[RMDB]
RNA sequence: GGGAACGACUCGAGUAGAGUCGAAAAAGCCGGUCUACGGACCGGCAAAACGUUCAUCUCGUUUUACGGGCCGCAUUAAGAUUGUAGCCAAGGAACGGGGACUUCAGACUACGACUACGGUCGUAGAUUACGCCUCCGAGUUUCGACUCGGAGGCAAGCAUCCUGUUUAGUUCGCUAAACAGGAUGCAAAAGAAACAACAACAACAAC
Reactivity to 2A3 in 0.01 (KOAc 150mM, MgCl2 10mM, bicine 150mM(pH8.5), 24C), signal-to-noise 1, nucleotides 027 to 156: a000g000c000c020g000g030u030c000u020a060c240g040g000a000c000c000g000g050c010a000a000a000a050c070g020u070u070c040a160u090c010u000c040g000u020u000u000u130a050c110g000g040g000c030c000g020c020a010u060u060a040a210g070a300u090u090g000u000a040g010c000c020a050a070g030g000a000a000c000g090g000g000g000a000c050u090u060c250a100g020a170c000u020a000c010g000a000c000u020a010c300g050g000u000c010g010u000a000g000a010u040u150a070c180g000c000c000u000c000c030g000a000g020u020u070u050c170g170a070c000u000c010g000g000a000g000g000c000a000a000

The record gives the reactivity of an RNA of 207 nucleotides to 2A3. The 2A3 profile rests on 435 reads. It was measured as part of the RMDB library M2RFPK.